[RMDB]
RNA sequence: GGGAACGACUCGAGUAGAGUCGAAAAACCCCCUCACUCUGCUCUCUGCUGGAAGUCAGAGGCCUCCCAGGAAGCCCCAGGGCCCCUCUUCACCCUGCUGGUCUAUCCGUGGCACCUCCCACCAAGUCUGUUCAGCAUCAUUCGUGAUGCUGAACAGAAAAGAAACAACAACAACAAC
Reactivity to 2A3 in 0.01 (KOAc 150mM, MgCl2 10mM, bicine 150mM(pH8.5), 24C), signal-to-noise 2, nucleotides 027 to 126: a010c000c000c000c020c000u020c010a020c020u030c020u050g010c020u010c000u000c000u070g030c010u050g040g080a070a040g070u120c030a030g010a010g030g010c000c000u030c040c000c000a000g060g010a070a050g030c000c000c000c000a010g020g050g000c020c030c020c000u010c030u080u040c010a040c000c010c000u020g000c030u030g000g020u000c010u040a120u010c020c030g010u050g020g020c030a020c010c000u000c010c000c000a040c000c010a080a020g070u020

Chemical mapping of a 177-nucleotide RNA with 2A3. Source: RMDB library RFM100, as collected in RNAgym. Values cover nucleotides 27 to 126.